[RMDB]
RNA sequence: GGGAACGACUCGAGUAGAGUCGAAAAUUCGAGACCAGCCUUGGUAACAUGAUGAAACCCCGUCCCUACAAAAAAUACAAAACAUCAGCUGGGCAUGGUGACACACACCUGUAGUCCCAGCUACUCAGCGGGCUAAGGUGGGAGGAUUGCUUAAGCCAUCACAGGGUAGAUUCGUCUACCCUGUGAUAAAAGAAACAACAACAACAAC
Reactivity to 2A3 in 0.01 (KOAc 150mM, MgCl2 10mM, bicine 150mM(pH8.5), 24C), signal-to-noise 1, nucleotides 027 to 156: u080u070c070g010a000g040a000c020c000a010g050c030c010u090u110g000g000u090a080a080c070a080u140g020a070u010g060a040a070a060c020c000c030c000g020u040c010c010c050u110a100c050a030a050a000a000a050a000u180a070c070a080a040a060a000c050a010u050c040a000g000c000u000g000g000g000c010a040u030g040g000u010g110a030c000a010c000a010c000a010c180c000u020g090u130a100g090u160c030c000c000a000g000c000u000a000c000u020c010a000g010c040g020g000g010c010u020a010a040g000g000u020g010g010g000a040g000g010a040u040u000g020c000u030u050a000a000g030c000c080
Reactivity to DMS in 0.01 (KOAc 150mM, MgCl2 10mM, bicine 150mM(pH8.5), 24C), signal-to-noise 1, nucleotides 027 to 156: u000u010c140g000a200g010a100c020c000a050g010c020c000u000u000g000g000u000a100a100c030a110u000g000a070u000g000a110a070a100c010c020c000c030g030u000c000c010c020u000a300c100a020a000a080a060a110a130u010a210c070a050a060a080a100c080a080u030c020a050g020c030u020g010g020g060c020a070u000g020g070u000g000a110c120a030c050a250c020a030c000c020u010g040u000a090g000u000c000c010c010a040g020c020u000a020c080u000c010a090g020c040g010g010g030c060u000a010a020g010g040u000g020g020g010a100g020g010a080u000u000g000c010u000u000a000a070g010c040c090
An RNA of 207 nucleotides, treated with 2A3 and DMS and read out base by base. The data come from the RNA Mapping Database (RMDB), library OK3TST. DMS adducts were read by reverse transcription with MarathonRT. The RNA was probed in 150 mM KOAc, 10 mM MgCl2 and 150 mM bicine (pH 8.5) at 24 C.